The record gives the reactivity of an RNA of 177 nucleotides to DMS and 2A3. Values cover nucleotides 27 to 126. The 2A3 profile rests on 952 reads. The data come from the RNA Mapping Database (RMDB), library OK1LIB. Conditions: 150 mM KOAc, 10 mM MgCl2 and 150 mM bicine (pH 8.5), 24 C. The DMS profile rests on 2,218 reads. For DMS the reverse transcriptase was MarathonRT.
RNA sequence: GGGAACGACUCGAGUAGAGUCGAAAAAGCACCGGGGGUGAGGUUGGCUUAAAGAGUCCGGCCGUCGCCUCCUGCACCAGCGCGCUCGUGUUGGUGGCCUCGGCAUUGACAAAUGCGUUUGCGGCCGAAGCAUGUGAGUGUUCGCACUCACAUGCUUAAAAGAAACAACAACAACAAC
Reactivity to DMS in 0.01 (KOAc 150mM, MgCl2 10mM, bicine 150mM(pH8.5), 24C), signal-to-noise 2, nucleotides 027 to 126: a030g000c000a050c110c130g020g000g000g030g010u000g000a260g030g000u000u000g010g020c010u000u020a130a140a160g000a050g030u090c000c030g000g000c030c010g030u010c020g000c000c000u000c010c030u000g000c000a060c000c010a110g000c040g000c060g000c140u010c140g000u000g020u010u000g000g020u000g000g000c010c000u000c000g010g000c000a100u000u020g050a300c300a040a040a030u000g040c040g000u000u000u010g000c040g020g060c060c050g040
Reactivity to 2A3 in 0.01 (KOAc 150mM, MgCl2 10mM, bicine 150mM(pH8.5), 24C), signal-to-noise 1, nucleotides 027 to 126: a000g060c040a040c020c020g020g010g000g000g000u000g000a030g000g000u020u020g000g000c010u030u160a300a110a000g230a040g050u050c000c010g010g000c010c010g200u110c000g000c010c010u000c000c000u000g010c000a040c000c010a000g010c020g000c030g030c020u190c240g050u000g040u080u010g080g000u020g050g000c000c030u010c000g040g000c040a050u020u060g070a130c070a040a080a030u070g000c040g020u100u190u170g000c000g020g000c000c040g010